The record gives the reactivity of an RNA of 207 nucleotides to 2A3 and DMS. Values cover nucleotides 27 to 156. The DMS profile rests on 2,413 reads. It was measured as part of the RMDB library OK3TST.
[RMDB]
RNA sequence: GGGAACGACUCGAGUAGAGUCGAAAAUGGAUAUGGUCAGCAUGAGCAGAAACUGGAUAAGCUGAUUCAGGUAUACAAGGAUGCUGGCGGAGUCGUGGCAUGAAAAAGCUAAGCAACUGGCUGCUUGGCCUGUGGAUUUCAUUCUGCUCGCUAUUGCCAGGGGGAUUGUAUUCGUACAAUCCCCCUGAAAAGAAACAACAACAACAAC
Reactivity to 2A3 in 0.01 (KOAc 150mM, MgCl2 10mM, bicine 150mM(pH8.5), 24C), signal-to-noise 2, nucleotides 027 to 156: u120g010g010a080u090a060u140g010g020u030c010a000g000c030a040u130g030a000g000c020a010g020a030a080a060c090u040g010g020a060u020a110a070g080c040u050g070a090u070u040c010a010g000g080u060a110u030a170c060a060a030g080g000a030u050g000c000u010g010g040c060g000g010a030g010u110c080g050u090g000g000c020a040u060g140a030a030a030a050a020g000c020u040a040a000g010c020a000a110c090u060g070g020c030u020g000c000u010u030g000g000c000c020u040g040u050g080g020a060u030u100u090c010a030u070u000c040u010g000c000u000c020g000c010u060a070u110u200g020c010
Reactivity to DMS in 0.01 (KOAc 150mM, MgCl2 10mM, bicine 150mM(pH8.5), 24C), signal-to-noise 1, nucleotides 027 to 156: u000g000g010a030u000a090u010g000g010u000c050a030g010c040a060u000g040a110g010c010a120g030a050a040a100c070u010g000g000a120u000a060a130g010c050u010g010a170u000u010c020a040g040g120u000a090u000a050c050a110a070g010g000a060u000g000c030u000g020g040c060g020g010a060g000u000c030g050u000g010g050c040a120u000g010a080a040a100a070a030g020c030u000a000a060g010c000a050a120c080u030g020g040c080u000g000c010u000u000g000g010c010c000u010g010u000g020g030a120u000u030u000c110a130u000u000c020u000g000c000u000c010g010c050u000a070u010u000g000c050